[RMDB]
Chemical mapping of a 207-nucleotide RNA with DMS and 2A3. Values cover nucleotides 27 to 156. For DMS the reverse transcriptase was MarathonRT. For 2A3 the reverse transcriptase was SuperScript II with manganese. Source: RMDB library M2RFPK, as collected in RNAgym. Conditions: 150 mM KOAc, 10 mM MgCl2 and 150 mM bicine (pH 8.5), 24 C.
RNA sequence: GGGAACGACUCGAGUAGAGUCGAAAAGCUUAAUAACCUGCGCUGAGCCCUUCUCCCCCAGCUUGCCUGUGUCCUAGGGAAUUGGAAGGUCAUCCUUCACAGGAUCGUCUGGAAGUCCUGCUCGGGGUCCAAACAUGGUAAUUCGUUACCAUGUUAAUACCACGAAUAUAUUCGUAUAUUCGUGGUAAAAAGAAACAACAACAACAAC
Reactivity to DMS in 0.01 (KOAc 150mM, MgCl2 10mM, bicine 150mM(pH8.5), 24C), signal-to-noise 4, nucleotides 027 to 156: g010c040u000u000a080a110u000a070a100c030c010u000g010c060g010c050u000g020a100g010c040c020c050u000u000c040u000c020c010c010c020c020a100g030c040u000u000g020c040c010u000g010u000g010u010c040c020u000a130g020g030g010a060a120u000u010g020g010a090a070g010g030u000c080a110u010c010c010u000u010c100a070c060a060g000g010a040u000c060g000u000c030u000g020g000a110a090g010u000c020c010u010g000c050u000c040g030g010g040g030u000c030c050a100a050a030c000a010u000g020g010u000a010a080u000u010c300g030u000u000a030c000c010a010u000g000u000u000a030a170
Reactivity to 2A3 in 0.01 (KOAc 150mM, MgCl2 10mM, bicine 150mM(pH8.5), 24C), signal-to-noise 2, nucleotides 027 to 156: g030c020u120u120a090a020u090a190a170c020c040u060g030c060g020c090u050g060a040g000c020c000c000u100u030c090u080c020c000c030c000c000a010g010c010u050u230g040c000c000u030g000u000g020u090c020c050u070a060g000g030g080a080a120u110u060g080g020a070a030g060g030u080c030a070u090c010c000u060u040c030a030c010a050g000g020a050u080c040g070u000c020u020g010g020a050a020g030u030c010c010u010g010c000u020c020g000g000g010g020u040c010c040a030a000a030c000a000u010g000g000u000a010a030u050u030c060g030u020u010a000c000c000a000u000g000u000u000a000a010